Conditions: 150 mM KOAc, 10 mM MgCl2 and 150 mM bicine (pH 8.5), 24 C. An RNA of 177 nucleotides, treated with 2A3 and DMS and read out base by base.
[RMDB]
RNA sequence: GGGAACGACUCGAGUAGAGUCGAAAAGAAAAAGAGCACGAGAUAUGAGAGACUAAUGUCUCGAGUAGUGGAUACGAAGGCCUAAGUAUCGACUACCGAAGGCCUAAGAUAUCGAGUGCUCGAAAAAGGGAUAUAUAUCCUUCGGGAUAUAUAUCCCAAAAGAAACAACAACAACAAC
Reactivity to 2A3 in 0.01 (KOAc 150mM, MgCl2 10mM, bicine 150mM(pH8.5), 24C), signal-to-noise 5, nucleotides 027 to 126: g150a000a060a000a010a000g000a000g000c010a000c000g040a030g010a050u000a000u040g100a110g010a010g010a040c070u180a250a090u260g010u010c000u000c010g000a020g010u020a000g000u010g120g010a010u010a030c010g020a130a010g180g010c010c010u060a070a000g000u000a000u040c070g110a010c010u010a000c000c010g050a100a030g010g010c000c000u010a050a020g080a030u010a000u000c000g000a000g010u000g010c000u000c000g000a000a000a000a010a000
Reactivity to DMS in 0.01 (KOAc 150mM, MgCl2 10mM, bicine 150mM(pH8.5), 24C), signal-to-noise 4, nucleotides 027 to 126: g020a090a070a060a060a110g010a000g010c000a010c000g010a290g010a030u000a000u010g000a300g000a030g000a040c010u010a130a090u040g010u000c010u000c000g000a130g010u000a020g000u020g000g000a030u000a000c020g000a130a050g000g020c060c040u000a110a100g000u000a000u020c110g020a040c080u000a000c000c010g000a060a040g000g000c020c030u000a070a110g000a060u010a010u000c000g000a240g010u000g000c000u000c000g000a000a020a060a120a100